[RMDB]
RNA sequence: GGGAACGACUCGAGUAGAGUCGAAAAGAAAAAAAUCACUCUCCCUGCCAGGGCAGAGGAGCCCUUGACUAGUUCUUCAUCACAAAUACUCUUGGAAGGAGGGUCCUAAGGUGACCUCUCCAUUCCUUGGCAACAUUUUCGGGACAGUUUUGGUUUAGCGCAUUUUAGUAUUCGUACUAAAAUGCGCAAAAGAAACAACAACAACAAC
Reactivity to 2A3 in 0.01 (KOAc 150mM, MgCl2 10mM, bicine 150mM(pH8.5), 24C), signal-to-noise 1, nucleotides 027 to 156: g000a030a020a000a000a000a000a040u100c030a070c020u030c000u010c000c000c000u000g080c030c080a300g080g000g000c080a040g010a190g030g020a030g000c000c000c000u040u040g060a050c010u040a030g060u000u000c000u050u040c010a050u040c060a070c040a060a100a150u100a100c050u040c050u130u000g030g030a000a010g000g000a000g000g000g000u000c010c010u220a240a020g120g090u170g080a030c020c010u290c060u030c000c000a190u000u070c000c000u000u010g000g030c030a100a100c010a100u150u170u070u160c090g000g000g000a000c010a050g060u060u030u070u090g050g050u070u080u100a020